[RMDB]
RNA sequence: GGGAACGACUCGAGUAGAGUCGAAAAAGACAAAAGAGAUCAGCGAUCUCCAGUGAAUCAAGGGGAUCUUACAGUCACGAUUACCGUUUGGCAAAAGACUGAUCCUUAGUAGAUCCAUACUGGAAAAUCGGUACUAUCCUUUCGAGGAUAGUACCGAAAAAGAAACAACAACAACAAC
Reactivity to 2A3 in 0.01 (KOAc 150mM, MgCl2 10mM, bicine 150mM(pH8.5), 24C), signal-to-noise 1, nucleotides 027 to 126: a010g070a000c010a000a130a000a030g060a000g000a030u020c040a000g040c020g000a010u000c000u000c010c000a060g030u100g300a100a150u170c070a160a170g000g000g000g030a000u000c000u000u100a110c050a050g030u020c010a000c060g050a050u050u230a100c130c030g020u100u100u050g050g000c030a000a000a120a040g110a080c000u010g000a000u040c000c000u050u040a020g030u060a000g010a080u000c030c020a030u120a190c080u080g030g140a000a070a050a150
Reactivity to DMS in 0.01 (KOAc 150mM, MgCl2 10mM, bicine 150mM(pH8.5), 24C), signal-to-noise 2, nucleotides 027 to 126: a060g020a100c010a050a120a030a050g030a100g060a030u000c050a060g000c020g000a050u000c100u000c000c000a020g010u000g010a100a070u010c110a170a100g040g000g000g000a000u010c030u010u020a060c200a150g020u000c000a050c160g000a220u000u070a210c090c010g040u000u000u020g020g000c000a060a060a150a050g000a110c000u010g000a030u000c000c010u000u000a150g010u010a120g000a080u000c000c020a120u000a100c150u060g010g000a090a080a090a070
Structure probing data (2A3 and DMS) for a 177-nucleotide construct. For DMS the reverse transcriptase was MarathonRT. The reactions ran in a buffer of 150 mM KOAc, 10 mM MgCl2 and 150 mM bicine (pH 8.5), at 24 C.